[RMDB]
RNA sequence: GGGAACGACUCGAGUAGAGUCGAAAACAAUCGCUCAUGGUGUAAUGGCUGUCAUAUUAGCUGGAUUUGUUCUGCUCUCCUGGAGUGAUAUGCGUUCUGGCGCUCUUCGGACAUGGUGGAUUAUUGUUGCGAUUGGGUUUGUUAUUACACUUAGUGGUCAUUGUAGCUCAUUCGUGAGCUACAAUGAAAAAGAAACAACAACAACAAC
Reactivity to 2A3 in 0.01 (KOAc 150mM, MgCl2 10mM, bicine 150mM(pH8.5), 24C), signal-to-noise 5, nucleotides 027 to 156: c040a010a070u090c060g030c030u090c060a070u110g030g010u020g030u050a060a050u070g060g000c040u020g030u060c050a030u060a060u300u130a090g040c020u050g110g000a080u060u040u120g070u080u020c010u010g010c000u010c010u030c050c040u060g040g020a030g020u070g060a070u080a100u280g040c060g030u100u030c060u110g090g000c010g000c030u040c000u040u080c050g020g010a040c020a080u110g020g030u010g010g040a020u010u100a060u060u230g110u080u050g030c020g040a030u020u030g000g010g010u050u060u060g030u020u010a060u060u070a030c000a000c030u050u050a050g030u060g080g020
Reactivity to DMS in 0.01 (KOAc 150mM, MgCl2 10mM, bicine 150mM(pH8.5), 24C), signal-to-noise 2, nucleotides 027 to 156: c070a080a110u000c060g020c020u000c100a110u010g010g000u020g000u000a050a080u010g020g030c020u010g020u000c080a110u000a130u000u010a090g040c030u010g020g030a140u000u000u010g020u000u000c020u010g030c030u000c050u000c010c020u020g020g010a090g040u010g000a110u000a050u000g010c000g010u000u000c070u010g050g040c050g000c030u000c030u000u000c150g030g010a090c080a060u000g020g030u010g030g020a080u000u000a050u000u000g020u000u010g020c030g020a240u000u010g000g020g020u010u000u000g010u000u000a050u000u000a020c020a040c030u000u000a120g030u000g030g000